[RMDB]
RNA sequence: GGGAACGACUCGAGUAGAGUCGAAAAGGAUAACACUGUUUUGCUAUUUCGACUAAUAACACAAUGAUACGUAAAAUAACUUUUUCACGUAUCAUUGUGUUAUUGGCCGAAAAUAGCAAAAUCGUAACCAGUUAGAUGUUUUCGAACAUCUAACUGGAAAAGAAACAACAACAACAAC
Reactivity to 2A3 in 0.01 (KOAc 150mM, MgCl2 10mM, bicine 150mM(pH8.5), 24C), signal-to-noise 5, nucleotides 027 to 126: g120g030a140u090a180a040c040a010c110u020g020u000u000u000u000g000c000u000a010u000u000u000c010g000a010c000u010a000a000u000a000a000c010a000c000a000a000u000g000a000u000a010c000g020u030a000a000a020a020u180a130a130c110u060u030u010u030u060c090a010c010g000u000a000u000c000a000u000u000g000u000g000u000u000a000u000u000g000g010c000c000g000a020a010a000a010u000a000g010c000a000a000a000a000u010c000g010u010a040a050
Reactivity to DMS in 0.01 (KOAc 150mM, MgCl2 10mM, bicine 150mM(pH8.5), 24C), signal-to-noise 5, nucleotides 027 to 126: g010g010a110u010a070a100c130a070c040u010g000u000u000u010u000g000c000u000a000u000u010u000c000g020a030c000u000a000a000u000a000a000c000a020c000a010a000u000g010a000u000a000c010g020u000a010a010a010a030u010a170a190c300u010u000u000u000u000c130a010c000g010u010a000u000c000a010u010u000g000u000g010u000u000a000u000u010g010g010c000c000g000a010a010a010a020u000a000g000c000a000a000a000a000u010c260g010u010a110a200
Overview
The data come from the RNA Mapping Database (RMDB), libraries RFM100 and RFMREP. Chemical mapping of a 177-nucleotide RNA with 2A3 and DMS. 2A3 adducts were read by reverse transcription with SuperScript II with manganese. The reactions ran in a buffer of 150 mM KOAc, 10 mM MgCl2 and 150 mM bicine (pH 8.5), at 24 C.